[RMDB]
RNA sequence: GGGAACGACUCGAGUAGAGUCGAAAAGACUAUCGGUCCCAACGCCAUGUUCUGGAACCGAUUGAUCAAUGAGACUGCUCAAUACGCUUCGAUAAAAUCCAAACGCGCUGGUCGCGGAGCGAGCAUCAACGUACACAAACGUCGGUGACGAUGGCGUUCUGCGCUAAAUGUUCGCAUUUAGCGCAGAAAAAGAAACAACAACAACAAC
Reactivity to 2A3 in 0.01 (KOAc 150mM, MgCl2 10mM, bicine 150mM(pH8.5), 24C), signal-to-noise 3, nucleotides 027 to 156: g040a010c060u100a050u200c030g030g020u010c000c000c000a020a000c020g000c020c020a050u060g030u170u090c110u260g020g040a020a020c000c010g000a020u060u090g090a110u040c140a140a070u120g020a030g040a050c090u050g020c020u000c020a030a100u190a180c140g000c000u010u020c000g090a080u110a220a160a030a030u050c060c020a090a130a070c080g030c020g030c150u040g080g030u130c060g010c020g040g000a010g000c020g000a000g020c010a010u120c020a020a110c060g100u140a100c080a000c030a070a160a020c040g010u000c010g020g000u020g000a020c020g000a010u000g020g010c010g000u010

Structure probing data (2A3) for a 207-nucleotide construct. Source: RMDB library OK3TST, as collected in RNAgym. For 2A3, 1,402 sequencing reads were counted. Reactivities are given for positions 27 through 156.